[RMDB]
RNA sequence: GGGAACGACUCGAGUAGAGUCGAAAAGUGUCAAGUGCCACGAGAAGUGCCAGGACCUGCUCAACGCCGACUGCCUGCAGCGUGAGCGCAGGGCCUGAGCGCAGGGCCACGGGUUGGCGUGGGGAGCGCACAGGCGUGAGUUCGCUCACGCCUGUGCAAAAGAAACAACAACAACAAC
Reactivity to DMS in 0.01 (KOAc 150mM, MgCl2 10mM, bicine 150mM(pH8.5), 24C), signal-to-noise 2, nucleotides 027 to 126: g020u000g020u030c080a150a070g020u010g000c020c040a020c130g090a140g000a100a130g000u010g010c020c030a040g000g000a040c020c000u020g000c000u000c060a210a030c020g010c000c020g000a120c040u010g000c110c010u010g030c050a090g040c010g000u000g000a130g000c180g020c010a080g030g010g000c010c000u010g000a090g010c000g060c010a080g000g000g000c070c050a080c060g000g020g000u010u000g000g000c070g000u010g000g010g000g010a140g000c130
Reactivity to 2A3 in 0.01 (KOAc 150mM, MgCl2 10mM, bicine 150mM(pH8.5), 24C), signal-to-noise 1, nucleotides 027 to 126: g060u050g100u150c070a050a110g080u080g070c010c020a040c150g110a040g000a220a020g010u020g020c010c010a000g000g040a040c000c000u030g020c000u020c040a010a070c020g010c030c000g090a120c110u190g080c060c050u170g020c000a040g020c000g000u020g050a050g000c080g030c030a000g010g000g040c000c000u030g000a020g010c020g020c030a020g010g000g060c010c020a010c020g050g040g020u120u170g080g000c060g060u150g010g010g000g000a030g050c080
This 177-nucleotide RNA was probed chemically with DMS and 2A3.
For DMS the reverse transcriptase was MarathonRT.
The reactions ran in a buffer of 150 mM KOAc, 10 mM MgCl2 and 150 mM bicine (pH 8.5), at 24 C.
For 2A3, 1,112 sequencing reads were counted.
For DMS, 1,718 sequencing reads were counted.
Values are in units of 0.01, from 0 to 300, in steps of 10.